[RMDB]
RNA sequence: GGGAACGACUCGAGUAGAGUCGAAAAUCAAAGAGAAUCAAUGAUCCAAUUUGUCUACCGCAUCAUUCAGUCAUUUAACGAGUCUAGUUUGAAUUUGGGUGACUCGGUAUGUGGAUGAAUGAGUCGGACAUGCCUCAGGUUUCGACCUGAGGCAUGUAAAAGAAACAACAACAACAAC
Reactivity to 2A3 in 0.01 (KOAc 150mM, MgCl2 10mM, bicine 150mM(pH8.5), 24C), signal-to-noise 2, nucleotides 027 to 126: u150c030a010a020a010g200a030g050a060a120u030c030a020a110u070g100a030u020c000c010a040a110u100u000u090g050u000c010u060a080c060c030g080c000a090u000c000a040u000u020c030a000g000u000c000a000u030u000u010a000a000c000g000a000g020u020c030u080a030g130u130u240u220g300a300a250u140u110u000g110g010g010u090g030a000c000u000c000g010g000u020a000u000g040u000g000g090a000u000g000a000a000u000g000a000g100u000c000g000g000